[RMDB]
About this RNA:
An RNA of 207 nucleotides, treated with 2A3 and DMS and read out base by base. For DMS the reverse transcriptase was MarathonRT. The RNA was probed in 150 mM KOAc, 10 mM MgCl2 and 150 mM bicine (pH 8.5) at 24 C.

RNA sequence: GGGAACGACUCGAGUAGAGUCGAAAAUUUUCCACCAGCAUGAACUGAUACACUGUUGGAUACUGUCCACAGGAGCUGCAUUGAGUGCCACCUGUCAGCAGCUGGCCAAGCCCGAGAAGAAUGUGUGGACAAGUGCAAACUAGCUGGUGCGACCAUAGUAAAAUCAUGCUUUCGAGCAUGAUUUUACAAAAGAAACAACAACAACAAC
Reactivity to 2A3 in 0.01 (KOAc 150mM, MgCl2 10mM, bicine 150mM(pH8.5), 24C), signal-to-noise 3, nucleotides 027 to 156: u110u150u070u000c010c000a000c000c010a010g000c020a050u090g030a120a100c050u060g030a070u160a140c120a020c120u130g080u170u030g080g000a030u060a060c010u000g010u000c010c000a020c030a070g140g030a070g030c060u070g040c050a130u110u200g080a070g010u120g060c010c000a050c010c040u060g010u060c030a070g010c000a010g020c160u010g000g000c010c010a050a020g010c010c020c030g120a090g030a100a030g040a150a010u140g020u010g000u000g160g000a000c030a070a010g010u010g070c030a000a060a120c040u020a020g000c000u000g000g050u000g010c060g040a050c050c010a040u090a040
Reactivity to DMS in 0.01 (KOAc 150mM, MgCl2 10mM, bicine 150mM(pH8.5), 24C), signal-to-noise 1, nucleotides 027 to 156: u020u000u000u000c000c020a130c020c020a130g000c000a190u010g050a140a300c170u000g000a170u000a100c020a080c050u020g000u000u000g000g020a110u000a090c050u000g080u000c020c000a020c020a050g000g000a030g030c020u010g070c080a150u000u010g000a220g090u000g010c040c070a120c000c060u000g020u020c240a070g020c020a130g010c020u010g010g050c040c060a220a190g010c000c000c020g020a110g000a090a060g000a160a020u000g020u000g060u010g000g000a010c020a160a080g000u000g010c050a000a090a140c070u000a170g010c000u000g000g010u000g000c000g000a200c030c020a000u000a200